[RMDB]
RNA sequence: GGGAACGACUCGAGUAGAGUCGAAAACGUUCAACGCUUCCAACCGUUUUGUGAAGAGGGGUCUGGCCGUGUCCCUAUCCAAGUUCGGGAUGUCCUUCACGAAGACGUUCAUGAACCAGUCGGGGGCGGACAUUGUGAGUUUCGACUCACAAUGUCCAAAAGAAACAACAACAACAAC
Reactivity to 2A3 in 0.01 (KOAc 150mM, MgCl2 10mM, bicine 150mM(pH8.5), 24C), signal-to-noise 2, nucleotides 027 to 126: c030g000u050u030c030a060a030c040g010c090u040u000c000c030a030a040c070c010g060u070u060u180u180g060u030g030a050a090g020a030g110g030g040g020u030c060u060g060g020c030c020g040u040g040u040c000c000c010u030a060u010c030c040a060a040g050u050u030c030g020g040g020a010u010g020u020c000c030u040u100c060a060c170g060a030a000g000a010c000g000u000u000c070a090u200g000a000a000c000c050a030g110u080c080g000g000g000g010g010c000
Reactivity to DMS in 0.01 (KOAc 150mM, MgCl2 10mM, bicine 150mM(pH8.5), 24C), signal-to-noise 2, nucleotides 027 to 126: c040g010u010u010c110a070a100c100g030c000u000u000c020c010a130a120c130c170g010u010u010u000u010g030u030g020a090a090g000a080g010g000g000g000u000c110u000g010g020c010c020g000u000g000u000c000c000c000u000a050u000c080c070a120a090g000u000u000c040g050g030g000a020u000g000u010c020c020u000u020c200a130c220g010a090a050g000a020c020g000u000u000c020a040u020g000a010a000c050c080a080g000u020c070g010g000g020g000g040c240
An RNA of 177 nucleotides, treated with 2A3 and DMS and read out base by base.
2A3 adducts were read by reverse transcription with SuperScript II with manganese.
Conditions: 150 mM KOAc, 10 mM MgCl2 and 150 mM bicine (pH 8.5), 24 C.
Reactivities are given for positions 27 through 126.
Values are in units of 0.01, from 0 to 300, in steps of 10.
In probing experiments dimethyl sulfate is read out at A N1 and C N3, which are open when not base-paired.